The record gives the reactivity of an RNA of 177 nucleotides to 2A3 and DMS.
It was measured as part of the RMDB libraries RFM100 and RFMREP.
Reactivities are rounded to 0.1 and cut off at 0 and 3.
The reactions ran in a buffer of 150 mM KOAc, 10 mM MgCl2 and 150 mM bicine (pH 8.5), at 24 C.

RNA sequence: GGGAACGACUCGAGUAGAGUCGAAAACGUUGACUGAUUGUACUCACCAGCUGGCUAAUAUCAUAAUUAACAAAGUUGCUACUAUGUCUGCAAAGUUUAAUCGAAUAAUUUGCCAGUGAUAUGAUGAAUCAUACUCAAGAUUCGUCUUGAGUAUGAUAAAAGAAACAACAACAACAAC
Reactivity to 2A3 in 0.01 (KOAc 150mM, MgCl2 10mM, bicine 150mM(pH8.5), 24C), signal-to-noise 7, nucleotides 027 to 126: c040g040u030u050g090a120c050u030g050a300u080u070g010u050a080c000u010c010a020c010c000a010g000c000u010g010g000c020u050a000a010u030a020u040c030a040u020a270a050u080u040a010a010c020a040a190a060g100u040u010g040c000u000a050c020u110a120u300g110u110c090u040g000c010a050a030a000g000u010u060u090a030a030u040c010g040a040a030u080a100a100u040u000u020g000c000c000a000g010u000g040a020u030a040u160g050a000u050g020a010
Reactivity to DMS in 0.01 (KOAc 150mM, MgCl2 10mM, bicine 150mM(pH8.5), 24C), signal-to-noise 9, nucleotides 027 to 126: c090g010u000u000g000a120c110u000g000a130u000u010g010u000a110c110u010c020a030c070c130a300g000c010u000g000g000c010u000a030a020u010a040u010c170a080u010a140a040u010u000a010a020c060a070a090a110g010u010u000g010c010u000a040c080u020a160u010g010u020c130u000g000c010a020a030a060g000u020u000u010a010a030u010c120g010a080a050u010a050a060u000u000u000g000c010c010a010g020u000g010a110u020a170u000g000a030u000g000a110